The data come from the RNA Mapping Database (RMDB), library OK3TST. An RNA of 207 nucleotides, treated with DMS and 2A3 and read out base by base. Reactivities are given for positions 27 through 156. The reactions ran in a buffer of 150 mM KOAc, 10 mM MgCl2 and 150 mM bicine (pH 8.5), at 24 C.

RNA sequence: GGGAACGACUCGAGUAGAGUCGAAAAGGGUGCACGGGAAGCGGCCCAGACCCAACCCAACGUGCUCUGGGGCUCAGCCUCAAUGUUUUCAGGGUACAGGGGUAACAAGAAGGAACAGCUUCCCUGCUCUGUGAUCUUGGAGGAGGGGUCCUCAGAAUCGUAAUAAUCGAUUCGUCGAUUAUUACGAAAAAGAAACAACAACAACAAC
Reactivity to DMS in 0.01 (KOAc 150mM, MgCl2 10mM, bicine 150mM(pH8.5), 24C), signal-to-noise 2, nucleotides 027 to 156: g010g020g050u010g010c040a070c090g020g000g040a070a060g030c040g030g000c010c020c000a130g030a100c020c020c010a150a190c000c000c010a070a160c080g020u000g000c040u000c000u010g010g010g030g010c030u000c070a050g040c040c000u000c000a000a070u000g010u000u000u000u000c010a060g020g000g010u010a120c030a100g010g020g010g000u000a060a150c040a090a110g020a150a150g010g000a110a120c090a170g000c020u000u000c020c030c000u000g000c020u000c010u040g010u000g010a050u000c010u000u010g010g020a090g010g010a060g000g010g000g000u000c010c000u000c040a050g010a060a190
Reactivity to 2A3 in 0.01 (KOAc 150mM, MgCl2 10mM, bicine 150mM(pH8.5), 24C), signal-to-noise 5, nucleotides 027 to 156: g010g000g000u050g020c070a020c070g020g010g010a080a060g100c100g060g050c030c010c010a030g090a060c000c010c000a020a050c000c000c020a030a040c100g040u060g020c010u000c020u020g010g000g020g000c020u030c080a040g020c010c020u030c010a070a060u190g030u030u050u040u060c020a010g000g000g030u060a070c020a010g020g020g000g050u080a070a040c060a080a030g110a070a060g140g070a150a070c030a050g040c000u060u060c000c000c000u000g000c000u000c010u020g020u040g030a050u020c000u070u120g120g050a020g010g030a030g010g000g000g020u100c010c010u010c010a020g030a030a050

For 2A3 the reverse transcriptase was SuperScript II with manganese. The DMS profile rests on 5,173 reads.